This 177-nucleotide RNA was probed chemically with 2A3 and DMS.
The reactions ran in a buffer of 150 mM KOAc, 10 mM MgCl2 and 150 mM bicine (pH 8.5), at 24 C.
[RMDB]
RNA sequence: GGGAACGACUCGAGUAGAGUCGAAAAUACAUCCGGCAGCGGUCAGGUAAGGCAAACCACGGUUUGGAGGGUGGUUCUCGGCUGACACCGCCGCGAGCUCUAUCUCCGGUCCAAAAUAAAAAUUUAACACCUUACAUUAUUUCGAUAAUGUAAGGUGAAAAGAAACAACAACAACAAC
Reactivity to 2A3 in 0.01 (KOAc 150mM, MgCl2 10mM, bicine 150mM(pH8.5), 24C), signal-to-noise 4, nucleotides 027 to 126: u090a020c040a070u040c010c030g030g000c010a020g010c020g050g010u060c080a080g020g040u060a080a070g020g020c040a060a000a010c000c010a010c040g070g120u100u180u260g170g050a110g010g130g000u030g020g000u060u010c060u030c020g160g000c010u000g010a040c010a010c080c020g000c000c010g000c010g010a010g000c010u000c010u060a150u080c030u010c010c010g010g010u040c030c020a010a040a100a030u250a050a100a030a020a010u110u190u110a090a000
Reactivity to DMS in 0.01 (KOAc 150mM, MgCl2 10mM, bicine 150mM(pH8.5), 24C), signal-to-noise 4, nucleotides 027 to 126: u020a130c160a090u020c040c020g010g010c080a120g010c050g000g010u010c070a080g010g000u010a060a130g010g010c050a070a050a030c020c010a040c050g010g030u010u000u010g030g010a080g000g010g010u000g000g010u000u010c070u000c120g000g000c000u010g010a100c130a070c050c030g010c010c010g000c030g000a060g000c040u000c070u010a040u020c010u010c010c030g020g000u000c050c090a060a050a060a060u010a020a060a070a100a080u010u000u000a080a180